[RMDB]
RNA sequence: GGGAACGACUCGAGUAGAGUCGAAAAUUACAUAAGUCUAACACCUUGUUUCGGACUAACAAGGGCGCAUGGAGGAUGGCCGGACCUCCAAAGUUAGACGUCCGAGAACCAGCCGAAAGGAAAAAGACCUCCAUAUCAGGUUCGCCUGAUAUGGAGGAAAAGAAACAACAACAACAAC
Reactivity to DMS in 0.01 (KOAc 150mM, MgCl2 10mM, bicine 150mM(pH8.5), 24C), signal-to-noise 2, nucleotides 027 to 126: u010u010a160c180a110u030a040a180g000u000c000u010a000a030c100a190c000c000u000u000g020u020u010u010c120g020g040a100c150u000a050a040c060a020a020g000g000g000c200g050c180a160u040g000g000a000g020g010a100u060g010g020c060c000g000g010a190c000c020u000c000c000a040a030a210g020u020u010a030g000a080c040g000u000c000c010g000a080g000a190a100c060c050a150g000c020c000g010a070a150a170g000g020a080a030a170a060a150g000a200
Reactivity to 2A3 in 0.01 (KOAc 150mM, MgCl2 10mM, bicine 150mM(pH8.5), 24C), signal-to-noise 2, nucleotides 027 to 126: u090u070a080c050a060u220a190a020g000u000c000u000a030a000c000a020c060c000u010u030g110u040u050u090c140g140g060a130c100u010a000a000c000a000a010g040g000g060c100g000c070a030u090g020g030a060g040g000a070u080g020g020c040c000g030g080a180c000c000u010c000c000a000a000a000g000u000u000a000g000a000c030g000u010c020c030g060a030g050a080a030c030c020a050g000c000c000g050a120a090a040g100g040a060a070a010a010a000g090a040
Structure probing data (DMS and 2A3) for a 177-nucleotide construct. For DMS the reverse transcriptase was MarathonRT. Values cover nucleotides 27 to 126. It was measured as part of the RMDB library OK1LIB.